Structure probing data (DMS and 2A3) for a 177-nucleotide construct. The DMS profile rests on 9,485 reads. Conditions: 150 mM KOAc, 10 mM MgCl2 and 150 mM bicine (pH 8.5), 24 C. The 2A3 profile rests on 10,739 reads.
RNA sequence: GGGAACGACUCGAGUAGAGUCGAAAAGAUAUGGAGAUUAUCGACAUGUACUAAGGUUCGGAAACGAACCGAUGUACAACAGCGAGUAAUCUCCUAAGUCAAAGGACCGCUGUUCGCAGCGGUCCAAUCAAUAAUAUGUCUUCGGACAUAUUAUUGAAAAAGAAACAACAACAACAAC
Reactivity to DMS in 0.01 (KOAc 150mM, MgCl2 10mM, bicine 150mM(pH8.5), 24C), signal-to-noise 6, nucleotides 027 to 126: g000a030u010a300u010g010g000a020g010a010u000u000a020u000c000g000a050c120a280u000g010u000a000c000u010a230a220g010g010u000u010c000g010g000a080a080a180c010g010a000a000c000c000g000a040u010g000u010a000c000a030a060c300a140g000c020g000a050g000u000a010a000u000c010u000c000c000u010a010a050g010u000c030a080a120a150g000g010a010c000c000g010c000u000g000u000u010c200g020c020a010g000c000g010g000u000c000c000a000a020
Reactivity to 2A3 in 0.01 (KOAc 150mM, MgCl2 10mM, bicine 150mM(pH8.5), 24C), signal-to-noise 3, nucleotides 027 to 126: g050a020u050a040u110g010g010a020g010a010u000u020a010u030c000g100a090c110a150u300g000u010a000c010u040a070a090g000g000u000u010c000g020g020a070a060a050c010g020a000a000c010c000g000a000u010g000u010a000c000a010a010c050a010g050c000g020a060g230u070a010a000u010c010u000c000c000u000a070a020g010u010c040a150a070a130g000g000a000c000c000g010c020u040g040u100u120c300g000c130a000g010c000g000g010u000c010c000a000a000